[RMDB]
RNA sequence: GGGAACGACUCGAGUAGAGUCGAAAAGAAAGAAAGAAAGCUGACCCUUCUGCUGACGGAUCUUGUGGAGCACCACAGUGCAGAAGGGGAGAGAAGCUUUAAUGCCGACCGUCUGGGCUGCCUUGAAAAAACGGAUUCUUCUUCGGAAGAAUCCGAACUAAUGGAUUCAGUUCGCUGAAUCCAUUAGAAAAGAAACAACAACAACAAC
Reactivity to 2A3 in 0.01 (KOAc 150mM, MgCl2 10mM, bicine 150mM(pH8.5), 24C), signal-to-noise 2, nucleotides 027 to 156: g060a000a050a000g050a020a070a020g070a020a060a010g010c020u030g070a080c010c000c000u010u000c000u000g020c010u030g020a030c050g050g050a090u120c040u180u060g000u020g010g000a100g130c110a090c050c010a010c010a020g050u050g020c000a000g000a000a000g000g000g000g000a010g010a000g020a030a000g000c000u030u050u000a110a060u160g040c040c000g050a070c010c010g000u020c060u070g010g000g000c000u000g000c000c010u030u090g010a090a100a000a000a000a000c000g000g000a010u000u000c000u000u000c000u020u030c160g070g000a000a000g000a000a010u000c010c000g000a000a000
Reactivity to DMS in 0.01 (KOAc 150mM, MgCl2 10mM, bicine 150mM(pH8.5), 24C), signal-to-noise 2, nucleotides 027 to 156: g010a120a070a140g010a100a090a100g000a080a020a070g030c030u010g000a200c000c010c000u000u000c010u000g010c010u010g030a150c070g020g000a080u010c060u020u030g030u000g040g000a200g020c170a080c010c020a070c000a070g020u010g080c000a020g000a030a020g000g010g000g010a010g000a070g040a180a060g010c000u000u010u000a060a070u010g050c010c040g000a160c010c010g000u000c120u000g020g020g010c040u010g040c050c090u000u010g030a010a070a110a100a090a160c050g010g000a030u000u010c010u000u000c000u000u010c300g030g020a040a000g000a030a010u000c010c000g010a000a040